[RMDB]
RNA sequence: GGGAACGACUCGAGUAGAGUCGAAAAACGCGAGGAUUCGUCCUCGCGUACAAAAGUGAGUUCGCCGGAUAGCUGCCUAAGUGAGUUCGCCGGAUAGCUGCCAAGCACAUAGUUUCGACUAUGUGAACGCUUAGAUUCAUUUCGAUGAAUCUAAGCGAAAAGAAACAACAACAACAAC
Reactivity to 2A3 in 0.01 (KOAc 150mM, MgCl2 10mM, bicine 150mM(pH8.5), 24C), signal-to-noise 3, nucleotides 027 to 126: a010c010g000c000g010a000g010g000a010u050u060c150g070u030c060c010u020c000g000c010g000u000a000c000a010a100a020a010g100u090g080a060g010u050u070c020g020c010c000g040g000a040u030a050g000c030u120g130c060c050u190a190a040g040u050g170a050g030u040u050c020g000c020c020g000g050a020u040a010g010c020u060g100c020c010a050a030g020c010a000c000a010u000a000g000u050u080u080c180g050a010c000u010a000u030g010u000g040a060a010
Reactivity to DMS in 0.01 (KOAc 150mM, MgCl2 10mM, bicine 150mM(pH8.5), 24C), signal-to-noise 3, nucleotides 027 to 126: a010c000g010c000g020a000g010g000a040u000u000c220g000u000c000c010u000c010g010c000g000u010a010c080a060a090a080a070g010u000g000a100g010u000u000c060g020c150c000g000g000a060u000a170g000c040u010g010c100c100u020a090a100g010u000g000a100g010u000u000c070g020c120c010g000g020a100u000a170g010c030u000g020c050c070a080a110g000c010a000c010a000u000a010g000u000u000u000c190g000a050c020u000a010u000g000u000g000a050a100
Annotation: The record gives the reactivity of an RNA of 177 nucleotides to 2A3 and DMS. The reactions ran in a buffer of 150 mM KOAc, 10 mM MgCl2 and 150 mM bicine (pH 8.5), at 24 C. Values cover nucleotides 27 to 126. For DMS, 3,115 sequencing reads were counted. DMS adducts were read by reverse transcription with MarathonRT. The data come from the RNA Mapping Database (RMDB), library M2PK50.